[RMDB]
The record gives the reactivity of an RNA of 207 nucleotides to 2A3.

RNA sequence: GGGAACGACUCGAGUAGAGUCGAAAAGGGCUGUGUGGCGAAAGCCACCGCAACGUCAUCUUACAUUGACUGGUUUCCUACCGGGUUACUUGGCAGGAAAUAAGACUUAAGGUAACUGGUUUCCAAAAGGCCUGUUGGUCGGCAUGAUGGAAAUAAGGUAUCCCACCAUGUUCGCAUGGUGGGAUACAAAAGAAACAACAACAACAAC
Reactivity to 2A3 in 0.01 (KOAc 150mM, MgCl2 10mM, bicine 150mM(pH8.5), 24C), signal-to-noise 1, nucleotides 027 to 156: g110g040g020c060u050g010u020g000u000g200g000c030g030a080a030a010g000c000c010a000c010c000g000c000a080a080c040g030u030c000a030u000c060u160u180a060c060a200u090u120g040a030c030u030g020g020u010u020u020c010c000u020a000c000c000g040g000g000u020u030a020c000u000u010g000g000c000a000g020g010a000a020a040u040a050a010g030a020c060u120u090a050a000g030g000u010a000a030c030u060g080g010u020u020u040c010c000a020a010a120a150g040g020c030c030u060g110u190u120g100g040u110c030g000g050c040a020u100g000a050u010g040g000a000a060a080u080a020a040g050

Description
The data come from the RNA Mapping Database (RMDB), library ARCHII.